Chemical mapping of a 177-nucleotide RNA with 2A3 and DMS.
[RMDB]
RNA sequence: GGGAACGACUCGAGUAGAGUCGAAAAAACAGCUGCUUCGGCAGCUGUUAACGCUCGCGGCUCGAGGCUGCACGAGCCGGACAGCAGCCAGUCCGGGAGCUAUAGCCUUGGAGUUCGCUCCAAGGAACCUAAAUGGAUUGUUCGCAAUCCAUUUAGGAAAAGAAACAACAACAACAAC
Reactivity to 2A3 in 0.01 (KOAc 150mM, MgCl2 10mM, bicine 150mM(pH8.5), 24C), signal-to-noise 4, nucleotides 027 to 126: a010a000c000a000g000c000u020g010c010u040u080c180g120g000c000a000g020c000u000g000u000u000a000a000c030g000c000u010c010g300c000g060g000c040u020c050g090a130g010g000c000u010g000c030a050c150g060a070g140c040c010g010g070a040c040a020g020c000a000g000c020c000a010g000u030c000c000g040g060g010a010g000c020u110a100u170a180g040c010c000u010u000g000g010a000g020u060u100c130g060c090u000c000c000a000a000g000g000a010a010
Reactivity to DMS in 0.01 (KOAc 150mM, MgCl2 10mM, bicine 150mM(pH8.5), 24C), signal-to-noise 5, nucleotides 027 to 126: a010a010c000a020g010c010u000g010c010u000u010c210g040g030c000a010g030c000u000g010u000u000a040a080c170g000c010u000c000g010c010g000g000c090u000c060g000a080g020g010c010u000g000c020a090c090g000a130g030c090c060g000g000a100c110a120g020c000a010g010c010c010a140g000u000c000c010g010g000g010a030g030c010u000a050u010a110g010c000c000u000u000g010g000a030g010u000u020c210g010c000u000c000c000a020a020g000g010a040a040
Record summary: The reactions ran in a buffer of 150 mM KOAc, 10 mM MgCl2 and 150 mM bicine (pH 8.5), at 24 C. For DMS, 6,123 sequencing reads were counted. Values cover nucleotides 27 to 126.